[RMDB]
RNA sequence: GGGAACGACUCGAGUAGAGUCGAAAAGUAUAGAAGCAUGAGACCGCAUGCGUUAUACGAUGAAUCACGGUCGAAUCCGUUGUGCGAAAGCACUUCGGUAAUGCAUAUCGGUAGGCAGAUCUGCCCGGAUCAGCUACCGUAAUUAGUACGGGCAAGACCUAGCACUAAUAUUCGUAUUAGUGCUAGGAAAAGAAACAACAACAACAAC
Reactivity to DMS in 0.01 (KOAc 150mM, MgCl2 10mM, bicine 150mM(pH8.5), 24C), signal-to-noise 3, nucleotides 027 to 156: g080u000a070u000a090g000a130a180g010c010a000u000g000a300g000a050c040c020g000c050a100u000g020c010g030u000u000a080u010a120c100g000a140u010g030a100a130u000c110a070c000g010g020u000c010g010a080a190u000c000c000g050u000u000g020u010g050c000g010a150a130a260g000c020a040c000u000u000c010g040g000u010a020a020u010g020c020a130u000a110u000c030g020g010u000a050g020g010c010a150g000a080u010c010u000g030c020c010c030g010g020a150u000c020a130g050c030u000a020c010c010g030u000a010a050u010u000a110g000u000a070c030g000g000g000c070a100a120g010a110
Reactivity to 2A3 in 0.01 (KOAc 150mM, MgCl2 10mM, bicine 150mM(pH8.5), 24C), signal-to-noise 6, nucleotides 027 to 156: g070u050a040u050a190g120a190a030g000c000a000u010g000a010g010a090c000c010g010c050a040u130g050c010g050u070u060a090u050a090c080g010a030u120g070a070a100u130c060a030c080g010g020u010c020g010a020a030u020c000c000g000u010u000g000u000g000c000g050a030a010a040g000c000a000c000u000u010c010g010g000u040a030a000u050g010c020a030u070a020u220c010g000g020u010a020g180g150c110a050g020a000u000c010u070g020c000c000c000g000g000a010u010c010a010g020c000u000a000c000c010g000u000a020a020u070u110a040g160u040a040c020g000g000g000c030a030a010g050a030
Record summary: Chemical mapping of a 207-nucleotide RNA with DMS and 2A3. The RNA was probed in 150 mM KOAc, 10 mM MgCl2 and 150 mM bicine (pH 8.5) at 24 C. The DMS profile rests on 5,156 reads. It was measured as part of the RMDB library OK3TST.